This 177-nucleotide RNA was probed chemically with 2A3 and DMS. The 2A3 profile rests on 13,901 reads.
RNA sequence: GGGAACGACUCGAGUAGAGUCGAAAAGAACUCACCUUCGGGUGAGUUCAAACCCGAUGAAGCGGCACUUAGAGAGCUUCAUACACCUAAGAAGUGCAAUAAAAACAACGCGGUUCGCCGCGUUGAAGCAUAGUAGAAAGUUCGCUUUCUACUAUGCAAAAGAAACAACAACAACAAC
Reactivity to 2A3 in 0.01 (KOAc 150mM, MgCl2 10mM, bicine 150mM(pH8.5), 24C), signal-to-noise 6, nucleotides 027 to 126: g000a000a000c000u000c000a010c000c010u020u050c140g090g000g000u000g000a000g000u000u000c000a000a010a000c010c000c000g010a040u040g010a010a010g010c030g080g010c060a020c080u110u200a040g040a010g010a000g190c000u010u010c000a000u020a010c090a040c000c050u100a110a070g070a090a010g060u010g030c040a040a060u190a140a110a010a010a010c000a000a000c000g000c010g000g050u030u050c210g030c070c000g000c000g010u000u000g000a000a000
Reactivity to DMS in 0.01 (KOAc 150mM, MgCl2 10mM, bicine 150mM(pH8.5), 24C), signal-to-noise 5, nucleotides 027 to 126: g000a020a010c000u000c000a010c000c010u000u010c250g020g010g030u000g000a020g000u000u000c000a010a120a110c000c000c000g010a070u000g010a020a020g020c010g020g020c060a050c070u000u000a140g010a150g020a180g000c000u000u000c020a020u000a130c070a060c070c060u000a120a080g010a120a100g010u010g010c090a160a100u010a030a090a090a120a160c000a010a000c000g030c000g000g010u000u000c200g000c020c000g010c010g000u000u000g000a040a090